[RMDB]
RNA sequence: GGGAACGACUCGAGUAGAGUCGAAAAGAGAGGAUCCUGAGUCAGCUGCAGACAGACCCCUUGGUCAUCCCUGUCAUCAAUCGGGCUCAAGUUAUCCACGACGCCUUCAACCUGGCGAGUGCCCGAAUGAUGACACGUAUUUCGAUACGUGUCAUCAAAAAGAAACAACAACAACAAC
Reactivity to 2A3 in 0.01 (KOAc 150mM, MgCl2 10mM, bicine 150mM(pH8.5), 24C), signal-to-noise 3, nucleotides 027 to 126: g130a000g000a040g050g020a050u040c020c040u030g020a020g060u030c010a010g030c040u080g070c050a030g020a080c000a020g060a040c020c010c010c050u030u110g060g010u080c010a040u030c060c020c000u040g070u070c030a070u040c030a070a140u050c020g020g000g030c030u020c030a000a040g050u100u110a070u100c040c010a050c060g100a040c020g050c010c000u090u120c040a080a100c020c070u010g020g020c000g010a020g030u020g020c020c000c020g000a030a030
Reactivity to DMS in 0.01 (KOAc 150mM, MgCl2 10mM, bicine 150mM(pH8.5), 24C), signal-to-noise 5, nucleotides 027 to 126: g020a120g000a070g010g000a060u000c060c030u000g010a080g010u010c050a070g020c070u000g000c110a090g010a070c070a070g000a100c060c030c070c060u000u010g010g010u010c080a120u000c060c030c040u000g000u010c060a060u000c060a030a060u000c020g010g010g010c040u000c060a070a090g000u000u000a080u000c120c040a100c040g000a180c020g000c010c000u010u000c150a090a130c180c160u010g000g000c020g010a170g000u000g010c010c000c000g000a040a110
Chemical mapping of a 177-nucleotide RNA with 2A3 and DMS. For DMS the reverse transcriptase was MarathonRT. Values cover nucleotides 27 to 126. For DMS, 4,319 sequencing reads were counted. The RNA was probed in 150 mM KOAc, 10 mM MgCl2 and 150 mM bicine (pH 8.5) at 24 C.